Record summary: Chemical mapping of a 207-nucleotide RNA with 2A3. The data come from the RNA Mapping Database (RMDB), library OK3TST. The 2A3 profile rests on 811 reads.

[RMDB]
RNA sequence: GGGAACGACUCGAGUAGAGUCGAAAAAGUGGACGAUACAUUACACCGAGCAAUUAAAUUACAGUCCACGCUCGGACAUUAUUCUGGCGAGAGCCAGUUCACAGACAGCUAGCGAAAGGAAGGACCUAGCAGGAAGGAAGGAGCUAGCGCUAGGACAGCUCACGAUGAUAUUCGUAUCAUCGUGAGCAAAAGAAACAACAACAACAAC
Reactivity to 2A3 in 0.01 (KOAc 150mM, MgCl2 10mM, bicine 150mM(pH8.5), 24C), signal-to-noise 2, nucleotides 027 to 156: a000g000u000g020g000a020c040g020a050u040a190c090a110u180u080a040c090a010c030c000g000a000g010c010a010a140u070u230a210a120a030u130u060a080c000a040g010u000c020c000a000c040g000c000u000c000g000g000a020c000a060u070u280a050u250u010c000u000g000g000c010g000a070g010a000g050c000c000a000g000u070u080c040a040c010a040g180a040c020a040g010c020u040a010g010c020g070a100a000a050g030g010a070a030g030g000a080c000c000u010a000g020c000a000g030g020a080a000g090g010a000a040g080g000a040g000c000u030a000g000c000g000c040u040a000g040g010a050c050a030